[RMDB]
RNA sequence: GGGAACGACUCGAGUAGAGUCGAAAAUCGAUGGCGUUCGCGCCAUCGAAGAGCCGUACCGCGUAGCACCCGGAUAGGAGUGAAGAUAUCCAAGGCCAUGGAGGAGGCGUGCUUUCGAGCACGCCAAUCGGUCCGUAUAAUUCGUUAUACGGACCGAAAAAGAAACAACAACAACAAC
Reactivity to DMS in 0.01 (KOAc 150mM, MgCl2 10mM, bicine 150mM(pH8.5), 24C), signal-to-noise 2, nucleotides 027 to 126: u000c020g030a010u000g000g030c010g030u000u010c160g030c030g030c010c000a020u010c000g000a020a040g000a110g010c000c020g010u000a100c020c000g030c120g000u000a070g000c070a070c040c020c030g030g000a080u020a050g000g030a060g000u010g020a100a110g010a070u000a090u020c030c060a050a060g000g000c040c040a080u000g010g010a080g000g020a160g000g020c020g000u000g010c000u000u000u010c170g000a010g040c020a000c000g020c000c020a030a010
Reactivity to 2A3 in 0.01 (KOAc 150mM, MgCl2 10mM, bicine 150mM(pH8.5), 24C), signal-to-noise 1, nucleotides 027 to 126: u020c000g000a000u000g000g000c040g000u030u090c260g000c020g040c070c000a000u010c000g020a020a010g000a020g030c000c040g000u110a040c030c040g020c000g060u030a030g030c020a080c060c020c000g010g020a100u160a140g000g040a030g010u100g090a050a040g010a170u150a030u100c050c020a060a040g060g030c000c060a070u090g000g010a020g010g060a060g000g000c000g010u000g000c000u050u060u080c190g030a020g000c000a010c000g050c000c020a010a020
Conditions: 150 mM KOAc, 10 mM MgCl2 and 150 mM bicine (pH 8.5), 24 C.
The record gives the reactivity of an RNA of 177 nucleotides to DMS and 2A3.
DMS adducts were read by reverse transcription with MarathonRT.
Reactivities are given for positions 27 through 126.
The DMS profile rests on 1,700 reads.
It was measured as part of the RMDB library M2PK50.